[RMDB]
RNA sequence: GGGAACGACUCGAGUAGAGUCGAAAACACUUUUGGUUAUACAUUUGUGCUGCUUAUGCCCAAGAUCCUGGUAAUGAGACUUAUGGUUCAGCAAUGCAUUGAAUUUAAUUAUUAUUAGUACAGGUGCCAUUAUGUAAUGCUUCGGCAUUACAUAAUGAAAAGAAACAACAACAACAAC
Reactivity to 2A3 in 0.01 (KOAc 150mM, MgCl2 10mM, bicine 150mM(pH8.5), 24C), signal-to-noise 6, nucleotides 027 to 126: c030a010c000u050u040u030u070g080g020u100u100a110u040a160c020a060u030u020u070g030u020g010c020u010g000c000u110u070a050u190g020c030c000c000a010a030g040a060u060c000c010u000g030g030u060a060a050u070g030a020g010a070c010u060u070a040u180g040g000u020u020c020a010g020c040a120a180u130g010c030a070u060u080g020a030a020u060u100u060a110a010u050u130a030u100u030a020u030u060a050g020u050a050c010a060g010g020u020g070c010
Reactivity to DMS in 0.01 (KOAc 150mM, MgCl2 10mM, bicine 150mM(pH8.5), 24C), signal-to-noise 8, nucleotides 027 to 126: c030a060c040u000u000u000u000g010g010u000u010a120u010a180c050a030u010u000u000g020u000g020c040u000g010c120u010u000a090u000g010c020c020c020a110a100g010a080u000c020c000u000g000g000u000a040a040u000g010a070g010a080c190u000u000a060u010g010g010u000u000c030a040g010c070a080a120u000g010c060a080u000u000g000a040a040u000u000u000a030a050u000u000a140u010u010a080u000u000a050g010u000a140c040a050g010g000u000g010c150